RNA sequence: GGGAACGACUCGAGUAGAGUCGAAAAAAGAUAUGGAACUUGGACAUGGGUACCUCUACCUUGGACCAAUUCUCGGAAACGAGAAUUGCUAGGUAGAGACUACCCAACAGCCAAGUUCCUAAGUCAACACUGUCUCACUGUUCGCAGUGAGACAGUGAAAAGAAACAACAACAACAAC
Reactivity to DMS in 0.01 (KOAc 150mM, MgCl2 10mM, bicine 150mM(pH8.5), 24C), signal-to-noise 1, nucleotides 027 to 126: a080a210g010a040u030a300u000g000g000a020a010c020u000u060g000g020a060c100a220u000g000g040g000u000a020c210c000u000c000u000a010c060c000u000u000g010g000a190c300c020a030a040u000u000c000u000c000g000g000a100a040a200c000g000a000g000a000a020u000u000g000c000u000a010g010g010u000a010g000a010g000a010c300u000a000c000c000c020a010a020c300a070g000c000c000a010a020g000u000u000c020c000u000a000a120g000u020c080a150a200
Overview:
The record gives the reactivity of an RNA of 177 nucleotides to DMS. Reactivities are given for positions 27 through 126. Conditions: 150 mM KOAc, 10 mM MgCl2 and 150 mM bicine (pH 8.5), 24 C. For DMS, 572 sequencing reads were counted.